[RMDB]
RNA sequence: GGGAACGACUCGAGUAGAGUCGAAAAGCCAGAACGACUGGGAAAGGAAAGAAAGCAACGGGGCUAGCUGCCGGGUGUUCCAUCCAUGGGAUCGGUGCCGAGUGAGGCUUAUCCCGGGGGGAUUGCCAUAGUGUCGUGUUCGCACGACACAAAAGAAACAACAACAACAAC
Reactivity to DMS in 0.01 (KOAc 150mM, MgCl2 10mM, bicine 150mM(pH8.5), 24C), signal-to-noise 4, nucleotides 027 to 129: g020c000c000a130g030a090a080c120g010a000c090u050g000g000g000a040a060a020g010g010a000a010a000g030a030a030a040g040c110a080a060c130g010g050g000g000c000u040a090g020c010u000g010c050c020g050g000g000u050g000u020u060c080c030a080u050c010c020a100u040g030g000g010a030u000c140g040g020u000g040c000c000g000a020g010u010g020a140g000g010c080u030u020a030u040c030c010c000g040g010g110g000g000g020a010u030u050g040c010c000a010u030a090
Reactivity to 2A3 in 0.01 (KOAc 150mM, MgCl2 10mM, bicine 150mM(pH8.5), 24C), signal-to-noise 4, nucleotides 027 to 129: g010c000c000a030g030a060a040c100g030a000c040u040g070g000g000a010a070a020g050g000a040a030a010g040a020a040a020g040c030a030a030c050g030g030g030g010c040u020a030g010c010u050g030c010c000g020g000g000u020g010u040u020c020c010a050u010c000c030a130u110g070g000g030a020u050c040g050g040u080g040c010c000g010a000g030u140g060a040g000g010c010u030u030a050u090c000c000c010g010g000g010g000g000g010a060u050u120g020c010c020a080u080a090